Structure probing data (2A3 and DMS) for a 207-nucleotide construct.
For DMS the reverse transcriptase was MarathonRT.
Values are in units of 0.01, from 0 to 300, in steps of 10.
The reactions ran in a buffer of 150 mM KOAc, 10 mM MgCl2 and 150 mM bicine (pH 8.5), at 24 C.
[RMDB]
RNA sequence: GGGAACGACUCGAGUAGAGUCGAAAAUAGUGCUGUGUCUUCCUCCUUGGCUCACGUUGACAGUGAAAGGAAAUCCCAUUAUGACACAAUGACAUUUAAUGGCAACUCUGACCCUGGGAAAUUCAUUCAUUCAGCAAACAUUGCUUAAGCUUAUAAAAUUACCAUUACUAUUCGUAGUAAUGGUAAUAAAAGAAACAACAACAACAAC
Reactivity to 2A3 in 0.01 (KOAc 150mM, MgCl2 10mM, bicine 150mM(pH8.5), 24C), signal-to-noise 7, nucleotides 027 to 156: u140a010g080u050g050c050u010g020u010g010u030c020u080u050c020c030u050c000c010u050u050g110g020c020u030c030a030c050g050u090u140g130a090c080a110g020u020g070a060a030a020g020g010a040a060a060u030c020c010c010a030u110u120a100u150g020a010c010a000c010a060a100u130g030a020c040a070u070u110u130a090a050u060g030g010c030a040a050c040u020c050u090g030a030c000c000c010u010g010g000g030a080a100a040u090u080c020a040u050u020c000a010u040u020c010a030g000c040a050a090a070c040a140u080u100g000c010u060u080a100a010g020c030u130u070a080u210a180a180a030
Reactivity to DMS in 0.01 (KOAc 150mM, MgCl2 10mM, bicine 150mM(pH8.5), 24C), signal-to-noise 4, nucleotides 027 to 156: u000a100g010u000g010c020u000g030u000g020u000c020u010u000c040c030u000c030c030u000u010g010g010c030u000c020a050c090g020u000u000g020a100c100a130g010u000g020a080a090a080g010g010a080a070a180u000c020c010c010a220u010u000a120u010g000a130c040a160c060a070a150u000g010a080c040a100u000u000u000a120a060u010g010g010c010a070a090c030u000c050u000g020a070c060c020c030u000g010g000g000a060a050a150u010u010c050a140u000u000c030a080u000u000c040a100g020c050a100a070a080c110a090u000u000g010c020u000u010a080a190g020c020u000u010a060u000a050a070a110